[RMDB]
RNA sequence: GGGAACGACUCGAGUAGAGUCGAAAAACAAGUGCCAACGAUAACGAGGCGCUCGCUAUUGCUGCGUAACUGACGGCCUGACGGUCUGACGUUACAAAGCUAAAGCGCGGUUGGACCCCACCGGGCACUGAGGGAGACGGUUCGCCGUCUCCCUCAGAAAAGAAACAACAACAACAAC
Reactivity to DMS in 0.01 (KOAc 150mM, MgCl2 10mM, bicine 150mM(pH8.5), 24C), signal-to-noise 1, nucleotides 027 to 126: a030c050a160a000g000u010g020c000c000a000a010c040g000a190u000a190a090c170g000a170g000g020c000g070c000u040c080g000c040u030a280u010u000g000c000u000g000c300g000u000a000a000c000u000g000a300c300g000g000c000c000u000g000a170c090g000g000u000c010u050g000a300c200g000u000u000a000c000a000a300a000g000c150u000a010a000a040g000c000g000c090g000g000u000u000g000g000a030c010c010c010c010a300c090c080g000g030g070c210a110
Reactivity to 2A3 in 0.01 (KOAc 150mM, MgCl2 10mM, bicine 150mM(pH8.5), 24C), signal-to-noise 1, nucleotides 027 to 126: a000c100a040a050g040u000g100c020c000a080a040c050g180a060u100a200a000c020g020a060g050g000c010g040c000u000c010g020c000u000a030u150u150g000c000u010g000c050g000u000a010a010c000u000g030a000c000g020g000c000c020u220g250a090c130g000g000u000c000u010g020a000c070g000u000u000a000c000a000a030a000g000c000u000a000a000a000g000c020g000c000g000g070u010u060g080g030a070c010c000c000c010a010c010c040g000g030g000c080a000